Structure probing data (2A3 and DMS) for a 177-nucleotide construct. Values cover nucleotides 27 to 126. The DMS profile rests on 1,707 reads. For 2A3 the reverse transcriptase was SuperScript II with manganese. The RNA was probed in 150 mM KOAc, 10 mM MgCl2 and 150 mM bicine (pH 8.5) at 24 C.
RNA sequence: GGGAACGACUCGAGUAGAGUCGAAAAAGCCAGCGGGCUGUCUUCCCAGGUGUAGAUCACCUAUUCUAACUUCACCUGUUUUGAUACCCUGAUGAGGAAAGUCCCAGGACUUGUCAGCUGGGAUAGGCUCAUAAUCGUUCUUCGGAACGAUUAUGAGAAAAGAAACAACAACAACAAC
Reactivity to 2A3 in 0.01 (KOAc 150mM, MgCl2 10mM, bicine 150mM(pH8.5), 24C), signal-to-noise 2, nucleotides 027 to 126: a020g100c070c010a110g150c300g130g140g000c030u010g040u030c010u010u030c030c020c010a000g030g010u000g010u010a060g030a240u150c040a060c050c000u000a130u030u130c060u060a070a160c020u040u020c030a050c030c000u040g200u110u040u120u150g050a050u110a150c000c000c040u030g070a120u020g040a050g020g050a120a020a020g030u000c030c010c030a050g020g070a070c050u050u050g010u050c030a040g030c010u050g000g000g030a020u010a040g040g000
Reactivity to DMS in 0.01 (KOAc 150mM, MgCl2 10mM, bicine 150mM(pH8.5), 24C), signal-to-noise 2, nucleotides 027 to 126: a030g010c020c020a130g070c200g010g000g020c020u000g000u000c060u010u000c010c000c000a050g010g010u000g020u000a040g020a110u000c090a080c040c020u000a090u000u010c080u010a050a150c040u000u000c030a050c040c040u010g000u010u000u020u000g000a110u000a130c110c060c010u010g000a080u000g020a060g010g010a100a070a120g000u000c010c030c050a090g000g020a160c010u010u000g040u000c040a040g010c100u000g000g000g010a050u000a020g000g000